Structure probing data (DMS and 2A3) for a 177-nucleotide construct. The reactions ran in a buffer of 150 mM KOAc, 10 mM MgCl2 and 150 mM bicine (pH 8.5), at 24 C. The data come from the RNA Mapping Database (RMDB), library M2PK50.

RNA sequence: GGGAACGACUCGAGUAGAGUCGAAAAUUAAAGCCAUUCGUGGCUUUAAACUCUGGUGUCCCGUAAAGGCUCGUGCGCGAUCCCACGCGAACCAGUUUUCGAUUAAGGAUAAGUUCGCUUAUCCUAACAUAGUCAGUACAUUCGUGUACUGACUAUGAAAAGAAACAACAACAACAAC
Reactivity to DMS in 0.01 (KOAc 150mM, MgCl2 10mM, bicine 150mM(pH8.5), 24C), signal-to-noise 8, nucleotides 027 to 126: u000u000a010a000a000g010c000c000a030u010u010c180g020u000g020g010c000u000u000u000a010a030a110c120u010c050u000g000g010u010g010u010c020c010c010g010u010a050a100a120g010g020c030u000c080g000u000g000c040g010c030g010a090u000c020c010c020a180c070g010c040g010a070a050c030c060a060g000u010u000u000u000c060g000a170u010u000a110a040g010g010a010u000a010a010g010u000u020c240g010c000u000u000a000u000c000c000u000a050a180
Reactivity to 2A3 in 0.01 (KOAc 150mM, MgCl2 10mM, bicine 150mM(pH8.5), 24C), signal-to-noise 3, nucleotides 027 to 126: u020u000a010a000a000g000c000c000a010u030u090c240g110u050g000g000c020u010u000u010a030a010a000c050u050c040u060g070g070u060g070u060c000c010c000g010u050a180a180a000g080g020c030u040c080g070u080g060c100g020c010g050a040u010c010c000c000a010c030g020c010g010a030a020c020c000a030g010u000u020u040u170c110g020a100u140u100a080a000g010g000a000u000a000a010g010u010u110c130g020c080u010u000a000u010c000c000u000a000a000